[RMDB]
RNA sequence: GGGAACGACUCGAGUAGAGUCGAAAAGCCUUGGCUUGCUACAAUUAACGAUCAACUUAGAACUGGUACGGACAAGGGGAAUCUGACUGUUAACGAGAUUCCCACUGUCCCUAUCUACUAUCUAGCGAGGCUGUCUGAUCAGGCAUUGCGUAAGCAGCAUGCUAAUGGGGUUCGCCCCAUUAGCAUGAAAAGAAACAACAACAACAAC
Reactivity to 2A3 in 0.01 (KOAc 150mM, MgCl2 10mM, bicine 150mM(pH8.5), 24C), signal-to-noise 6, nucleotides 027 to 156: g010c000c010u040u060g150g000c010u030u020g000c020u110a100c040a060a070u120u070a150a040c050g040a050u060c040a040a070c050u080u100a040g030a080a070c100u050g000g020u010a010c040g010g000a000c010a020a060g010g000g000g010a000a000u000c000u040g200a120c040u160g160u300u180a220a070c100g010a010g000a010u000u000c000c000c000a010c000u000g000u000c000c000c000u010a010u000c000u020a030c010u040a070u130c020u020a030g040c030g090a040g120g000c040u030g020u020c070u020g020a050u020c010a020g070g000c030a030u020u060g020c020g020u010a050a010g000c010a000g040
Reactivity to DMS in 0.01 (KOAc 150mM, MgCl2 10mM, bicine 150mM(pH8.5), 24C), signal-to-noise 3, nucleotides 027 to 156: g020c000c000u010u000g040g030c020u020u010g010c040u000a090c040a100a110u000u010a090a110c050g060a050u000c040a060a090c040u010u000a040g030a060a170c010u020g010g020u000a050c120g010g010a030c030a040a050g000g020g030g010a020a020u000c020u000g010a140c120u000g040u000u010a100a140c080g020a060g010a070u000u000c000c000c000a000c000u000g000u000c000c000c020u010a020u010c010u000a300c040u000a080u000c050u000a120g010c060g000a130g020g020c020u000g010u010c060u010g000a080u000c030a050g030g020c080a090u000u000g040c130g000u000a070a210g020c020a110g050